[RMDB]
RNA sequence: GGGAACGACUCGAGUAGAGUCGAAAAGGCGUCUUCGCUGCCUCGGCCGCCUUGCACUGACCGGUAGCCGCCGUAAUUGCGGCAUUGUUCCCAUAAAAGGAUGUGGGUGUGGGUGUCGAAGUAGCAGCGUAUAGCAUCAUUUCGAUGAUGCUAUACGAAAAGAAACAACAACAACAAC
Reactivity to 2A3 in 0.01 (KOAc 150mM, MgCl2 10mM, bicine 150mM(pH8.5), 24C), signal-to-noise 8, nucleotides 027 to 126: g070g030c060g080u050c070u130u080c080g010c020u020g000c000c000u010c010g010g000c020c040g050c030c000u040u200g010c010a020c020u070g110a060c010c030g040g050u080a040g000c010c010g020c010c010g040u070a040a090u150u170g000c000g000g010c000a010u010u160g010u030u020c010c000c000a010u140a020a130a010a010g120g030a090u150g020u130g170g000g000u020g010u030g010g050g000u050g000u000c010g000a030a000g010u040a000g000c020a010g030
Reactivity to DMS in 0.01 (KOAc 150mM, MgCl2 10mM, bicine 150mM(pH8.5), 24C), signal-to-noise 9, nucleotides 027 to 126: g010g010c080g010u010c070u000u010c120g020c010u000g010c010c030u000c030g010g010c040c050g020c010c010u000u010g030c030a030c030u000g010a100c040c050g000g010u000a140g010c010c010g020c010c170g010u010a110a110u020u000g010c000g010g010c010a080u000u010g010u000u000c000c000c000a130u010a040a060a110a120g010g010a110u010g010u000g010g000g020u000g020u000g010g010g020u000g010u000c020g010a040a050g010u000a040g020c030a180g010